[RMDB]
RNA sequence: GGGAACGACUCGAGUAGAGUCGAAAAGUGACCAGGCCAAGGAGACGGGCGCUCCAGGGUCCCAGCCACCUGUCCCCCCCAUGGAGCUGAGGCCCUGGUUGCUAUGGGUGGUAGCAGCAACAGGAACCUGGGAAUAAUUUUUCGAAAUUAUUCCCAGAAAAGAAACAACAACAACAAC
Reactivity to DMS in 0.01 (KOAc 150mM, MgCl2 10mM, bicine 150mM(pH8.5), 24C), signal-to-noise 2, nucleotides 027 to 126: g020u020g010a130c050c010a100g020g000c060c060a110a110g000g010a110g010a090c140g010g010g020c130g010c060u000c010c010a020g010g020g020u010c000c010c010a010g010c000c030a060c020c030u000g020u020c020c000c010c010c020c030c000a040u010g000g000a300g000c000u000g000a060g010g000c030c000c000u000g000g000u010u000g010c020u000a090u000g000g000g010u010g010g020u010a040g000c030a050g010c020a030a070c050a070g030g030a100a130c160